[RMDB]
RNA sequence: GGGAACGACUCGAGUAGAGUCGAAAAGGUCAACGCAAUGCCGGUCGUUGCCAGAAUAGCGAUCAUCCAGAACAGCGCGUGCAGCCCAAGUUUGUGAGUGAUGAUCGGGCCAAGCACCAUCGCAAUGGACCUGCCAUAUGUUCGCAUAUGGCAGGUCAAAAGAAACAACAACAACAAC
Reactivity to DMS in 0.01 (KOAc 150mM, MgCl2 10mM, bicine 150mM(pH8.5), 24C), signal-to-noise 2, nucleotides 027 to 126: g020g000u020c030a050a050c080g010c080a080a080u010g020c010c130g020g000u010c050g040u000u000g000c000c060a110g010a070a110u000a130g000c060g010a010u000c030a030u000c000c020a110g000a060a040c110a100g000c180g040c180g000u010g030c060a070g040c000c020c010a070a150g000u000u000u000g040u000g020a040g030u000g030a040u000g020a020u000c030g010g000g000c080c060a060a070g010c060a060c010c030a050u000c050g000c110a130a060u010g010
Reactivity to 2A3 in 0.01 (KOAc 150mM, MgCl2 10mM, bicine 150mM(pH8.5), 24C), signal-to-noise 2, nucleotides 027 to 126: g010g000u060c020a000a080c000g010c070a050a200u130g070c040c000g010g000u070c020g010u000u060g040c010c010a070g130a220a170u210a050g120c030g020a020u040c010a020u000c000c010a050g070a090a070c020a010g040c020g000c030g080u130g040c010a040g030c020c000c020a100a010g050u080u080u040g060u060g030a110g050u180g010a040u000g000a020u040c000g000g000g000c020c020a020a090g030c040a030c060c010a030u130c040g060c020a010a110u100g130